[RMDB]
RNA sequence: GGGAACGACUCGAGUAGAGUCGAAAACUUCCGCGCGAUCCAAGGUAUACUCCUGCGCGCGUUGCGCGAGGAGUUCUGUAUCGCCGCGGGGCGCACUGAGACCGAGCUGGACGCCUGGUGGCAGGCGUGGCGUGGUCAGCUUCGGCUGACCACGCCAAAAAGAAACAACAACAACAAC
Reactivity to 2A3 in 0.01 (KOAc 150mM, MgCl2 10mM, bicine 150mM(pH8.5), 24C), signal-to-noise 1, nucleotides 027 to 126: c000u110u050c000c000g000c000g000c000g040a000u000c000c020a180a000g100g000u040a100u000a130c040u000c040c000u150g270c000g100c000g040c000g200u110u300g000c000g050c020g060a000g000g000a000g000u010u020c010u000g000u000a000u000c000g030c030c000g010c120g000g000g000g000c040g030c000a080c070u160g020a070g050a140c000c000g000a000g000c000u020g070g030a040c040g000c000c000u010g060g160u090g180g110c040a010g010g000c000g050
An RNA of 177 nucleotides, treated with 2A3 and read out base by base. The reactions ran in a buffer of 150 mM KOAc, 10 mM MgCl2 and 150 mM bicine (pH 8.5), at 24 C. The data come from the RNA Mapping Database (RMDB), library OK1LIB. For 2A3, 441 sequencing reads were counted. For 2A3 the reverse transcriptase was SuperScript II with manganese. Values cover nucleotides 27 to 126.